Description
Structure probing data (DMS and 2A3) for a 177-nucleotide construct. Values are in units of 0.01, from 0 to 300, in steps of 10. It was measured as part of the RMDB library TTRDEL. The RNA was probed in 150 mM KOAc, 10 mM MgCl2 and 150 mM bicine (pH 8.5) at 24 C.
RNA sequence: GGGAACGACUCGAGUAGAGUCGAAAAGAUAUGGAUCGCGGGAGAAGUACUCGGAAACGAGUAUACUUCGUUGAUCGAUGAUCCUAAGUCAAAUCACCAUGUACCCGUUCGCGGGUACAUGGUGAAAUCGUGCAGUAAUGUUCGCAUUACUGCACGAAAAAGAAACAACAACAACAAC
Reactivity to DMS in 0.01 (KOAc 150mM, MgCl2 10mM, bicine 150mM(pH8.5), 24C), signal-to-noise 2, nucleotides 027 to 126: g000a070u000a300u010g000g010a010u000c020g000c000g020g010g000a010g020a030a010g010u000a030c010u000c000g020g000a090a110a190c000g040a010g000u000a100u010a040c000u000u000c000g000u010u000g000a060u010c000g000a040u010g030a010u000c000c000u010a070a070g000u000c050a070a130a170u000c000a000c000c000a000u000g000u000a010c000c000c000g010u000u020c260g000c010g030g000g010u000a000c000a000u000g000g000u000g000a010a040a060
Reactivity to 2A3 in 0.01 (KOAc 150mM, MgCl2 10mM, bicine 150mM(pH8.5), 24C), signal-to-noise 2, nucleotides 027 to 126: g010a010u090a060u160g000g000a000u000c010g000c050g000g040g030a040g000a030a000g020u020a010c000u000c000g010g040a040a050a060c010g000a000g000u050a110u050a050c010u040u000c010g030u180u030g010a010u010c030g020a160u200g000a000u030c010c000u000a130a010g040u030c010a020a010a190u040c010a020c010c010a030u000g000u000a010c010c010c030g020u040u100c300g050c020g140g000g030u010a000c010a000u010g000g020u000g020a000a000a000
High DMS reactivity at an A or C suggests that its Watson-Crick edge is free. The DMS profile rests on 1,785 reads.